[RMDB]
RNA sequence: GGGAACGACUCGAGUAGAGUCGAAAACAUUCUUUUUACACCCCUAUUCGUUAAAGACUAUACUAGAUUGGAUAUUACAAUGCAACAUAUUAACAUACAAACUUUUUGCUUAAAGAAUAGUAGCAGAUACAUAGUCAUCGUUCGCGAUGACUAUGUAAAAAGAAACAACAACAACAAC
Reactivity to 2A3 in 0.01 (KOAc 150mM, MgCl2 10mM, bicine 150mM(pH8.5), 24C), signal-to-noise 2, nucleotides 027 to 126: c030a070u090u060c040u070u100u060u060u040a040c030a040c000c010c020c000u000a020u020u090c000g000u000u060a050a080a020g040a100c010u040a030u080a180c030u010a030g040a190u040u050g070g010a010u030a050u130u060a060c090a120a030u060g040c050a030a030c020a100u160a030u150u080a040a000c000a030u170a070c050a140a130a090c010u040u040u060u070u050g040c010u070u140a150a050a000g020a090a020u010a040g040u010a020g060c020a020g040a100
Reactivity to DMS in 0.01 (KOAc 150mM, MgCl2 10mM, bicine 150mM(pH8.5), 24C), signal-to-noise 2, nucleotides 027 to 126: c120a180u000u000c010u010u010u000u010u000a130c090a170c050c020c030c020u000a040u000u010c020g010u000u010a060a040a080g010a090c090u010a050u000a040c040u000a040g000a110u000u000g000g010a040u000a070u020u010a050c150a050a060u000g010c120a080a080c130a070u010a110u000u000a000a050c070a060u020a050c050a010a060a090c040u000u000u000u020u000g010c040u000u000a030a070a100g010a010a020u000a030g010u000a100g000c140a100g010a110
The record gives the reactivity of an RNA of 177 nucleotides to 2A3 and DMS. For 2A3 the reverse transcriptase was SuperScript II with manganese.